[RMDB]
RNA sequence: GGGAACGACUCGAGUAGAGUCGAAAACUGUUCAAAGACCAAAGCACAACAUUUAUCUAGUGUUUGAUCCUAGUAUAAAAGAAUGGCAAUAAUUAUGUGAACAGGAAUUACAUGCCCUUAGAAUGUGCAUUUUUUAACCUAUUAAAUUUGCCAAUCAGUUUUAUCGCUAGUUCGCUAGCGAUAAAACAAAAGAAACAACAACAACAAC
Reactivity to DMS in 0.01 (KOAc 150mM, MgCl2 10mM, bicine 150mM(pH8.5), 24C), signal-to-noise 1, nucleotides 027 to 156: c040u000g040u000u000c030a110a170a050g010a030c030c030a030a100a050g030c030a090c010a080a190c110a170u000u000u010a060u030c090u000a140g020u000g020u000u000u010g000a090u000c050c040u010a110g020u000a090u000a040a050a160a050g030a020a090u000g020g020c020a080a090u020a050a110u000u000a070u040g000u010g000a020a070c010a000g030g000a070a140u020u000a050c100a100u010g040c030c030c010u000u000a100g000a180a140u010g000u000g030c060a000u010u000u010u000u000u000a130a080c100c070u010a120u000u000a050a040a160u010u000u000g020c020c010a090a140u000c070a130
Reactivity to 2A3 in 0.01 (KOAc 150mM, MgCl2 10mM, bicine 150mM(pH8.5), 24C), signal-to-noise 3, nucleotides 027 to 156: c010u010g000u020u030c030a120a020a050g060a100c050c040a070a070a060g050c010a030c010a190a050c020a030u060u100u080a080u050c030u020a030g010u030g100u240u100u250g100a080u110c010c000u000a030g060u100a070u060a090a040a010a040g080a070a040u040g000g010c030a010a020u120a190a090u190u180a090u230g060u010g010a010a000c000a000g000g190a020a030u170u160a020c020a060u060g030c010c010c000u010u020a120g030a130a080u080g050u050g000c010a030u050u010u050u030u030u140a110a140c010c010u050a100u190u120a160a080a130u040u020u050g000c000c000a040a050u070c030a080